The record gives the reactivity of an RNA of 177 nucleotides to DMS and 2A3. High 2A3 reactivity points to a flexible backbone, as in loops and unpaired stretches. The reactions ran in a buffer of 150 mM KOAc, 10 mM MgCl2 and 150 mM bicine (pH 8.5), at 24 C. For DMS, 1,913 sequencing reads were counted. For 2A3, 2,252 sequencing reads were counted.
[RMDB]
RNA sequence: GGGAACGACUCGAGUAGAGUCGAAAAUGGUGAUGCCUCGCCACGCUUGGCUCAAGCAUUAGCUCAAGCGCAUGUGGUCGCAGCUGAGGACACUCGACGCACGCGUGCUCUCGCUCAGGCGUUGGGCCCACGGCCUGGUAUUCGUACCAGGCCGUGGAAAAGAAACAACAACAACAAC
Reactivity to DMS in 0.01 (KOAc 150mM, MgCl2 10mM, bicine 150mM(pH8.5), 24C), signal-to-noise 2, nucleotides 027 to 126: u030g010g040u000g010a080u010g010c030c020u000c130g030c010c050a070c090g030c040u000u000g000g000c020u000c160a100a080g000c060a080u000u000a030g030c010u000c130a030a040g010c050g020c080a060u030g020u000g010g010u010c030g030c080a070g030c070u010g000a050g000g010a100c220a060c010u000c000g000a050c090g000c060a100c080g030c040g020u000g000c090u000c060u000c070g000c010u000c110a120g030g000c050g000u000u000g010g000g030c080
Reactivity to 2A3 in 0.01 (KOAc 150mM, MgCl2 10mM, bicine 150mM(pH8.5), 24C), signal-to-noise 2, nucleotides 027 to 126: u100g040g010u070g060a080u180g010c010c010u030c060g000c010c010a040c010g050c020u010u000g010g000c020u050c090a080a070g080c060a210u000u160a010g000c050u090c200a080a000g000c010g000c030a080u130g040u070g030g090u110c040g010c090a030g000c070u090g060a030g000g050a040c040a030c040u010c010g040a070c030g040c030a040c020g040c020g030u050g010c020u020c030u020c050g000c070u080c070a010g080g000c040g040u070u070g020g010g020c000